[RMDB]
RNA sequence: GGGAACGACUCGAGUAGAGUCGAAAAUCUGUAAUCGCAAUCGUGUGUUCAAAGUGUGCCGAGAGUGCGCCGUCUUUGGUGUAGACACUCCACUUGUCUUUACGAUCGACGUAAACAUCGGGGCUACUCUUUGGCAGAAUUUCGAUUCUGCCAAAGAAAAAGAAACAACAACAACAAC
Reactivity to DMS in 0.01 (KOAc 150mM, MgCl2 10mM, bicine 150mM(pH8.5), 24C), signal-to-noise 2, nucleotides 027 to 126: u020c040u010g020u010a050a070u010c050g020c070a050a090u010c110g030u000g020u000g000u000u020c100a080a050a120g000u000g020u000g000c070c020g000a130g030a110g000u000g010c040g010c090c060g010u010c030u010u000u000g020g060u000g010u000a040g010a050c070a030c070u020c030c090a050c080u020u010g000u000c020u010u000u010a020c050g000a140u000c090g000a060c010g000u000a120a090a060c040a060u000c040g000g000g010g020c040u000a050c100
Reactivity to 2A3 in 0.01 (KOAc 150mM, MgCl2 10mM, bicine 150mM(pH8.5), 24C), signal-to-noise 1, nucleotides 027 to 126: u000c010u020g090u100a120a050u080c020g000c080a010a140u070c030g080u040g000u010g070u180u010c050a050a120a080g060u070g000u020g070c030c070g130a080g000a020g090u050g010c010g010c020c010g060u030c030u060u030u120g060g000u030g000u030a030g010a030c010a020c040u050c040c000a070c040u030u020g050u000c000u070u120u070a020c060g030a050u070c030g110a070c000g020u040a090a030a000c010a000u060c010g000g000g060g000c030u010a030c030
The record gives the reactivity of an RNA of 177 nucleotides to DMS and 2A3. For DMS, 2,122 sequencing reads were counted. The RNA was probed in 150 mM KOAc, 10 mM MgCl2 and 150 mM bicine (pH 8.5) at 24 C. It was measured as part of the RMDB library OK2TST.